Structure probing data (DMS and 2A3) for a 177-nucleotide construct. 2A3 adducts were read by reverse transcription with SuperScript II with manganese. It was measured as part of the RMDB library RFM100. For DMS, 1,582 sequencing reads were counted. Conditions: 150 mM KOAc, 10 mM MgCl2 and 150 mM bicine (pH 8.5), 24 C.
RNA sequence: GGGAACGACUCGAGUAGAGUCGAAAAACUACUCGGUACGCCGAGUAGAAACCGAUGAGGAGCGUUAGCCACGCUGAAGAUGAUGACAAGAGGGUUAGCCGAGGAGCGGCGUGUACGCACGCCGCAACCCCAAUCCCCAGUUCGCUGGGGAUUGGGGAAAAGAAACAACAACAACAAC
Reactivity to DMS in 0.01 (KOAc 150mM, MgCl2 10mM, bicine 150mM(pH8.5), 24C), signal-to-noise 1, nucleotides 027 to 126: a220c000u010a000c010u010c000g000g070u010a050c300g090c000c020g000a000g000u000a000g020a060a090a140c000c000g030a200u050g000a110g070g000a000g010c000g000u000u030a140g000c070c160a010c130g000c020u000g000a170a180g000a060u000g030a070u020g060a140c090a050a070g060a160g020g000g000u000u040a090g000c050c040g010a010g000g000a010g000c000g000g000c000g100u000g000u000a120c120g000c000a000c000g030c010c040g070c020a000a000
Reactivity to 2A3 in 0.01 (KOAc 150mM, MgCl2 10mM, bicine 150mM(pH8.5), 24C), signal-to-noise 2, nucleotides 027 to 126: a000c000u020a000c000u000c010g000g040u060a040c300g030c090c000g000a000g000u000a000g000a000a030a000c030c010g010a040u160g040a010g130g030a040g020c050g080u060u110a040g050c040c000a050c040g050c030u040g000a070a040g000a060u170g010a030u080g010a060c000a070a060g000a070g050g040g020u110u100a030g010c010c000g050a050g090g060a120g000c020g020g010c130g000u000g000u010a060c300g000c100a000c020g000c000c020g030c000a000a000